Chemical mapping of a 177-nucleotide RNA with 2A3 and DMS.

[RMDB]
RNA sequence: GGGAACGACUCGAGUAGAGUCGAAAAGAUAUGGAGGUCCCUAUGGACAUGCCAUUGUCUCGGAAACGAGACUUUGGCAACAGCCAUCGGGACCUCCUAAGUCAAAGCAUCUCGUUCGCGAGAUGCACAACUUGCAAUGGUUCGCCAUUGCAAGUUGAAAAGAAACAACAACAACAAC
Reactivity to 2A3 in 0.01 (KOAc 150mM, MgCl2 10mM, bicine 150mM(pH8.5), 24C), signal-to-noise 1, nucleotides 027 to 126: g020a010u070a040u150g000g020a010g030g000u000c000c000c020u020a000u010g000g040a060c120a190u120g000c000c000a000u020u020g010u000c000u000c000g040g050a110a080a070c040g000a010g010a020c000u010u000u000g000g000c010a000a000c000a000g050c000c000a010u010c010g000g010g010a000c010c000u000c000c000u000a000a000g000u000c000a010a020a030g010c000a010u000c000u000c000g020u050u100c300g010c020g130a010g000a010u000g000c000a010
Reactivity to DMS in 0.01 (KOAc 150mM, MgCl2 10mM, bicine 150mM(pH8.5), 24C), signal-to-noise 4, nucleotides 027 to 126: g010a080u020a300u000g000g010a030g010g000u000c000c010c010u020a010u000g000g030a040c150a180u020g020c000c000a000u000u000g000u000c000u000c010g000g010a110a100a240c010g000a010g000a010c000u000u000u010g010g020c000a030a030c300a130g000c000c000a000u000c160g030g010g000a010c000c000u000c000c010u000a000a060g010u000c060a130a100a150g010c000a000u000c000u010c000g030u000u030c290g020c020g020a010g010a010u000g000c020a070
The reactions ran in a buffer of 150 mM KOAc, 10 mM MgCl2 and 150 mM bicine (pH 8.5), at 24 C. It was measured as part of the RMDB library TTRDES. For DMS, 3,344 sequencing reads were counted. 2A3 adducts were read by reverse transcription with SuperScript II with manganese.